[RMDB]
Source information
The record gives the reactivity of an RNA of 177 nucleotides to DMS and 2A3. For 2A3 the reverse transcriptase was SuperScript II with manganese. For DMS the reverse transcriptase was MarathonRT. As a SHAPE reagent, 2A3 marks flexible, mostly unpaired nucleotides at the ribose 2'-OH.

RNA sequence: GGGAACGACUCGAGUAGAGUCGAAAAGAUAUGGAUCGAACUACAGCCACUCCGAUGAAAUAAUUCGGAAACGAAUUAUGGAGGGAGCUGCGAUCCUAAGUCGGCCCAAGUCGUUCGCGACUUGGAACUUGAUAUGGGUCUUCGGACCCAUAUCAAGAAAAGAAACAACAACAACAAC
Reactivity to DMS in 0.01 (KOAc 150mM, MgCl2 10mM, bicine 150mM(pH8.5), 24C), signal-to-noise 3, nucleotides 027 to 126: g020a050u000a300u000g000g010a020u000c010g010a110a040c110u010a300c020a000g000c010c080a300c070u010c000c000g000a120u000g000a110a130a020u010a000a020u000u000c010g020g000a070a060a120c000g020a020a000u010u000a020u000g020g000a010g020g010g020a190g030c000u000g000c000g000a010u000c000c000u000a020a060g000u000c000g010g030c120c000c000a020a000g020u020c000g000u010u020c220g030c020g010a010c010u000u000g000g000a070a070
Reactivity to 2A3 in 0.01 (KOAc 150mM, MgCl2 10mM, bicine 150mM(pH8.5), 24C), signal-to-noise 3, nucleotides 027 to 126: g000a010u040a030u110g000g000a000u010c020g020a140a110c130u170a070c290a030g010c030c050a130c090u050c030c020g300a300u210g150a060a130a050u040a010a010u020u000c000g020g000a020a010a010c000g000a010a000u020u010a030u140g000g000a000g050g040g080a100g000c010u010g000c000g000a000u000c000c000u000a100a000g020u030c030g070g000c010c000c010a010a000g000u020c000g050u090u190c300g000c040g160a010c000u000u030g040g020a070a100